This 170-nucleotide RNA was probed chemically with DMS and 2A3. The reactions ran in a buffer of 150 mM KOAc, 10 mM MgCl2 and 150 mM bicine (pH 8.5), at 24 C.

RNA sequence: GGGAACGACUCGAGUAGAGUCGAAAACCAACCCGCGGGCCGGCUACUCUUCUUUCCCUUCUCUCGUCUUCCUCGGUCAACCUUCGAAGUUCCUCUUCUUCCUCCCUGCUGAGGUUCUUCCCUCCCGUCACCUUGGGGUUCGCCCCAAGGAAAAGAAACAACAACAACAAC
Reactivity to DMS in 0.01 (KOAc 150mM, MgCl2 10mM, bicine 150mM(pH8.5), 24C), signal-to-noise 6, nucleotides 027 to 129: c020c010a150a130c080c040c060g020c060g000g000g000c000c050g000g000c020u030a000c080u030c040u000u030c020u000u000u000c030c000c030u000u040c000u020c010u020c030g020u020c050u030u000c030c010u010c040g000g000u040c060a070a110c010c000u010u020c070g020a070a090g030u030u020c030c020u030c000u040u000c030u000u000c040c010u020c000c000c060u010g010c020u010g000a050g030g030u000u000c010u000u000c000c000c000u020c000c000c020g050u060c100a120
Reactivity to 2A3 in 0.01 (KOAc 150mM, MgCl2 10mM, bicine 150mM(pH8.5), 24C), signal-to-noise 9, nucleotides 027 to 129: c010c010a010a070c000c010c020g020c010g020g010g010c020c010g030g010c010u070a070c040u050c040u100u020c010u040u070u050c020c010c000u080u030c040u010c010u020c020g060u010c010u120u050c020c010u020c010g030g000u050c040a070a080c010c020u120u140c060g030a040a020g020u030u020c000c000u010c000u010u020c000u110u050c010c010u020c000c000c000u010g000c020u030g020a020g010g010u010u000c000u010u010c010c000c000u020c010c010c000g050u060c030a050